An RNA of 177 nucleotides, treated with 2A3 and DMS and read out base by base. The reactions ran in a buffer of 150 mM KOAc, 10 mM MgCl2 and 150 mM bicine (pH 8.5), at 24 C. 2A3 adducts were read by reverse transcription with SuperScript II with manganese. It was measured as part of the RMDB library OK2TST. The 2A3 profile rests on 984 reads.
[RMDB]
RNA sequence: GGGAACGACUCGAGUAGAGUCGAAAAUUAGGUCCCAGACAUGGGCCCUGCCCGUGCGUGUCUCUGUGGACUGGACCAGGACAUGGCUGGCUUCCUCAGCCUUUUGGCUGGAGCUCGGUACUGUAGGGCUCACAUGCAGGUUCGCCUGCAUGUGAGCAAAAGAAACAACAACAACAAC
Reactivity to 2A3 in 0.01 (KOAc 150mM, MgCl2 10mM, bicine 150mM(pH8.5), 24C), signal-to-noise 1, nucleotides 027 to 126: u080u050a010g070g010u050c010c020c010a000g050a020c060a030u080g010g000g000c000c000c120u070g010c000c010c030g020u000g050c070g030u080g040u000c050u000c010u270g140u230g050g080a110c070u130g010g060a110c040c000a040g000g040a030c060a050u070g080g000c000u010g000g050c050u080u070c020c020u010c040a010g040c000c020u070u180u080u200g010g010c010u000g030g000a040g000c010u050c120g070g020u070a080c050u120g090u060a080g080g030
Reactivity to DMS in 0.01 (KOAc 150mM, MgCl2 10mM, bicine 150mM(pH8.5), 24C), signal-to-noise 1, nucleotides 027 to 126: u030u010a110g050g000u010c030c020c030a100g010a120c260a090u000g010g000g000c020c080c050u010g000c040c050c080g060u010g010c080g020u000g010u000c000u020c040u000g030u020g000g000a100c100u020g010g020a100c050c030a040g000g020a060c070a060u000g000g000c020u000g000g000c050u000u010c030c100u000c050a050g000c000c020u010u020u030u030g000g020c000u000g020g000a060g000c030u000c030g010g000u000a070c080u010g010u000a070g020g000